[RMDB]
RNA sequence: GGGAACGACUCGAGUAGAGUCGAAAAUCAAUCUAGUUCGCUAGAUUGAAAAGGGCGAUGAGCCCCGCCCAAACUGCCCUGAAAAGGGCUGAUGGCCUCAAAAAAUCCGUCGGUUCGCCGACGGAAAGCAUUAUCAAUAGUUCGCUAUUGAUAAUGCAAAAGAAACAACAACAACAAC
Reactivity to 2A3 in 0.01 (KOAc 150mM, MgCl2 10mM, bicine 150mM(pH8.5), 24C), signal-to-noise 3, nucleotides 027 to 126: u020c000a000a000u010c000u010a000g020u030u010c040g030c070u000a010g010a010u000u000g000a020a010a000a020g020g000g000c030g080a110u110g020a100g010c010c010c010c010g010c010c000c000a020a040a020c040u030g000c000c000c000u000g020a040a030a030a030g000g000g010c000u000g010a010u020g030g030c010c020u020c030a080a070a010a010a010a090u010c010c000g000u000c010g000g050u020u050c240g030c080c000g000a000c000g000g000a010a000a000
Reactivity to DMS in 0.01 (KOAc 150mM, MgCl2 10mM, bicine 150mM(pH8.5), 24C), signal-to-noise 5, nucleotides 027 to 126: u000c000a010a000u000c000u000a000g000u000u010c220g020c000u000a000g010a020u000u000g000a000a050a090a130g000g000g020c020g000a110u010g010a290g000c070c000c040c080g010c020c000c000a050a090a210c080u010g010c000c000c000u000g010a080a050a170a030g010g000g020c000u000g000a090u000g010g000c110c040u010c030a000a030a070a080a120a100u000c000c000g010u000c000g010g000u000u010c210g020c010c000g010a010c000g000g000a000a000a070